Background:
The data come from the RNA Mapping Database (RMDB), library TTRDEL. Structure probing data (2A3 and DMS) for a 177-nucleotide construct. For 2A3 the reverse transcriptase was SuperScript II with manganese.

RNA sequence: GGGAACGACUCGAGUAGAGUCGAAAAGAUAUGGACACUGGAACUACAUAGAGAACAGCAUCGAUCUCGGAAACGAGGGAGCUGACUAUGCCAGUGUCCUAAGUCAAAACGAGGCUUCGGCCUCGAACUUUUUACAUCAGUUCGCUGAUGUAAAAAGAAAAGAAACAACAACAACAAC
Reactivity to 2A3 in 0.01 (KOAc 150mM, MgCl2 10mM, bicine 150mM(pH8.5), 24C), signal-to-noise 6, nucleotides 027 to 126: g010a020u070a010u160g010g010a000c000a000c000u000g010g020a100a070c120u250a040c300a010u030a010g070a010g100a300a060c000a010g030c020a080u300c080g060a080u020c010u000c010g040g000a100a080a050c010g000a000g000g030g010a010g000c000u010g050a150c010u010a010u010g020c000c000a010g000u010g000u000c000c000u010a000a000g010u000c000a000a010a050a120c030g000a000g000g010c010u070u140c300g160g000c020c000u000c000g000a000a000
Reactivity to DMS in 0.01 (KOAc 150mM, MgCl2 10mM, bicine 150mM(pH8.5), 24C), signal-to-noise 5, nucleotides 027 to 126: g000a060u010a300u000g000g010a010c010a010c010u000g020g010a120a030c090u010a300c010a020u000a000g000a170g000a080a120c020a010g030c000a260u010c190g000a060u010c000u010c000g000g000a130a090a160c010g010a010g000g000g010a040g000c000u010g010a080c000u000a010u000g000c010c000a000g010u000g000u000c000c000u000a010a040g000u010c040a050a040a100a130c020g000a010g020g000c010u000u010c220g030g010c000c000u000c000g000a020a040